[RMDB]
RNA sequence: GGGAACGACUCGAGUAGAGUCGAAAAGGAGCUAACAAUGCAUUCAUCAAUAUUCUCGAUGAGUACGUGGCAUCGGCAUUCAGCAAUGCUCACAGCGCGAGUAAGGUCGCUCCAUCCCCAGUAGCAACAUACUGUGUAGGUGUCUGGUGGGCGCUGGGAUAACGAGAGAUUUCGAUCUCUCGUUAUCAAAAGAAACAACAACAACAAC
Reactivity to DMS in 0.01 (KOAc 150mM, MgCl2 10mM, bicine 150mM(pH8.5), 24C), signal-to-noise 2, nucleotides 027 to 156: g020g010a080g010c020u020a090a060c060a070a100u000g030c030a040u000u010c010a030u000c010a100a120u010a170u010u010c090u000c090g000a040u000g020a070g060u000a010c030g040u000g020g060c030a110u000c040g000g000c010a130u000u000c080a210g040c060a070a100u000g000c030u000c030a090c060a060g010c060g000c060g010a090g030u000a100a100g010g010u000c060g010c030u000c020c000a090u000c030c010c010c020a040g010u010a040g020c020a120a150c120a210u000a010c020u000g020u010g040u010a070g030g000u000g000u000c050u010g030g040u000g010g020g030c000g030c010u010g020g000
Reactivity to 2A3 in 0.01 (KOAc 150mM, MgCl2 10mM, bicine 150mM(pH8.5), 24C), signal-to-noise 6, nucleotides 027 to 156: g000g010a000g000c020u060a060a040c060a090a100u110g030c020a040u030u060c010a030u020c020a030a170u110a270u300u130c170u080c100g040a040u040g010a000g040u110a080c090g020u040g050g000c010a050u050c040g070g000c030a040u080u110c020a080g020c060a040a040u070g010c040u060c070a020c010a010g020c020g010c010g030a010g030u080a070a040g070g030u060c060g000c010u000c000c000a020u040c010c000c000c000a030g030u100a010g040c050a020a080c010a090u080a030c020u040g020u050g090u250a060g010g050u030g030u020c030u050g090g030u030g020g030g000c020g000c030u030g030g030